[RMDB]
RNA sequence: GGGAACGACUCGAGUAGAGUCGAAAACGCCAUACCGAUCAUUAACACAAUCAACAUUUUUAAAAAGAACUUUCAGAAAACAUCCAUAUCGUGCUGGUGUCUGGCUCGCACCAAUAGAGGAGCAGUCCAUAACAAUCCCUUUCGAGGGAUUGUUAUGAAAAGAAACAACAACAACAAC
Reactivity to 2A3 in 0.01 (KOAc 150mM, MgCl2 10mM, bicine 150mM(pH8.5), 24C), signal-to-noise 3, nucleotides 027 to 126: c040g000c010c010a030u060a060c010c040g030a030u060c020a030u060u180a100a030c030a010c010a060a060u140c030a010a150c020a070u070u030u060u160u290a130a180a050a020a000g070a060a060c030u050u130u100c100a020g100a070a090a010a020c010a020u000c020c000a010u020a020u080c040g010u040g030c050u020g020g010u000g040u040c030u030g050g000c030u010c020g000c000a020c030c000a040a060u090a030g140a020g040g020a010g050c030a010g030u000c020
Reactivity to DMS in 0.01 (KOAc 150mM, MgCl2 10mM, bicine 150mM(pH8.5), 24C), signal-to-noise 3, nucleotides 027 to 126: c120g010c030c040a040u000a050c070c030g020a040u000c030a030u000u010a140a070c060a060c070a050a040u000c040a050a040c010a030u000u020u000u000u010a020a100a080a130a080g020a080a090c100u010u000u010c090a050g000a060a050a040a060c040a050u010c000c010a030u000a020u000c060g000u000g020c060u000g000g000u000g000u000c040u000g010g000c020u000c120g000c040a030c020c000a040a090u000a090g010a070g010g000a060g000c040a070g000u000c060